RNA sequence: GGGAACGACUCGAGUAGAGUCGAAAACGACAUGGCUUCGGCCAUGUCGAAAGGACCAGUGAGACCGAAACGGAGGUAGGUCCAACUACCUUCUCACUCAAAAAAUCCGUUUGUUCGCAAACGGAAAGUCGUGUAAAAACUUCGGUUUUUACACGACAAAAGAAACAACAACAACAAC
Reactivity to 2A3 in 0.01 (KOAc 150mM, MgCl2 10mM, bicine 150mM(pH8.5), 24C), signal-to-noise 1, nucleotides 027 to 126: c000g000a000c010a000u000g000g020c020u060u040c270g020g000c000c000a010u000g000u000c010g000a000a000a000g020g010a050c070c000a000g020u010g030a010g000a060c040c070g070a110a070a030c120g060g010a020g000g010u010a000g030g000u100c050c010a060a070c010u010a010c000c000u050u050c030u010c020a050c020u050c060a070a150a000a000a020a070u050c000c000g000u000u040u000g050u050u050c230g000c130a000a020a000c000g040g000a010a000a000
Reactivity to DMS in 0.01 (KOAc 150mM, MgCl2 10mM, bicine 150mM(pH8.5), 24C), signal-to-noise 1, nucleotides 027 to 126: c040g000a020c000a030u000g010g000c000u000u030c300g060g040c000c000a000u020g000u000c000g010a080a030a060g000g000a140c060c060a000g000u000g010a010g010a220c130c030g000a010a140a100c090g010g000a010g000g030u030a000g000g000u030c260c250a080a120c000u010a000c000c000u030u010c000u000c050a080c010u030c190a010a000a080a030a120a050u000c000c000g000u020u000u000g000u000u000c230g020c010a000a000a000c000g000g000a010a000a080
Chemical mapping of a 177-nucleotide RNA with 2A3 and DMS. It was measured as part of the RMDB library M2PK50.